[RMDB]
RNA sequence: GGGAACGACUCGAGUAGAGUCGAAAAUAACGGACUAGGAAACUCGAUCUUUUAAGUGGUAAUCCUAGCGAAUCCACGGCGAGGAAACUAGCACACUAACCAUGUGAUCCCGGACGCUAGAAGAAAAUAUCGGUGAAGUAUUCGUACUUCACCGAUAAAAAGAAACAACAACAACAAC
Reactivity to DMS in 0.01 (KOAc 150mM, MgCl2 10mM, bicine 150mM(pH8.5), 24C), signal-to-noise 2, nucleotides 027 to 126: u030a080a110c230g000g000a170c030u000a020g000g010a090a160a140c030u010c040g000a070u010c130u010u010u000u000a060a190g010u000g000g000u000a110a100u000c030c000u000a070g000c010g010a220a100u000c000c000a030c040g000g000c070g000a040g000g000a110a090a090c030u000a020g000c000a090c050a030c060u010a080a110c170c120a260u010g010u000g000a140u000c060c000c010g040g000a090c070g010c030u000a010g000a250a060g010a020a070a030a090
Reactivity to 2A3 in 0.01 (KOAc 150mM, MgCl2 10mM, bicine 150mM(pH8.5), 24C), signal-to-noise 1, nucleotides 027 to 126: u110a060a020c070g050g000a030c010u010a010g010g060a170a080a070c020u030c020g060a100u100c120u080u300u090u270a260a030g020u030g040g000u020a050a020u060c020c010u040a050g000c020g000a000a040u020c010c010a000c020g070g000c000g020a010g000g000a000a180a000c010u000a000g000c000a000c000a010c050u020a020a030c010c000a010u080g000u000g020a070u020c020c000c000g050g020a030c030g030c020u040a000g000a130a000g080a030a230a050a000
Structure probing data (DMS and 2A3) for a 177-nucleotide construct. The RNA was probed in 150 mM KOAc, 10 mM MgCl2 and 150 mM bicine (pH 8.5) at 24 C.